[RMDB]
RNA sequence: GGGAACGACUCGAGUAGAGUCGAAAAAUACGAAGGACUGCCUUGGCAUGGAAAAUGUGCACAAAUCAUGCGAUCAUCAAAACGUGCAUGUGGUUUACUAAGUAUUCCAACAUGGCCAAAAAUAGGCGACGAUGUAAAUCUUCGGAUUUACAUCGUCAAAAGAAACAACAACAACAAC
Reactivity to 2A3 in 0.01 (KOAc 150mM, MgCl2 10mM, bicine 150mM(pH8.5), 24C), signal-to-noise 2, nucleotides 027 to 126: a000u090a010c030g030a040a020g040g020a020c030u060g010c000c000u040u090g050g000c010a030u030g010g050a040a090a030a070u150g050u020g000c020a000c020a060a100a070u100c040a030u090g080c050g120a150u110c030a010u040c030a050a080a040a060c060g010u040g010c000a000u050g020u040g010g020u040u040u020a030c000u020a140a110g020u000a010u040u020c000c000a020a000c020a110u110g130g020c000c000a100a110a050a020a030u110a090g030g010c040
Reactivity to DMS in 0.01 (KOAc 150mM, MgCl2 10mM, bicine 150mM(pH8.5), 24C), signal-to-noise 3, nucleotides 027 to 126: a050u000a020c070g000a210a070g000g000a110c150u000g000c000c060u000u000g000g000c020a070u000g010g010a110a080a130a090u000g020u000g020c010a040c040a030a120a080u010c090a110u010g000c090g020a100u000c100a090u010c130a060a040a080a110c160g000u000g010c000a010u000g020u000g000g000u000u010u000a070c070u010a080a250g000u000a020u000u000c020c000a010a130c090a070u020g000g000c030c050a010a060a060a090a130u020a050g010g010c100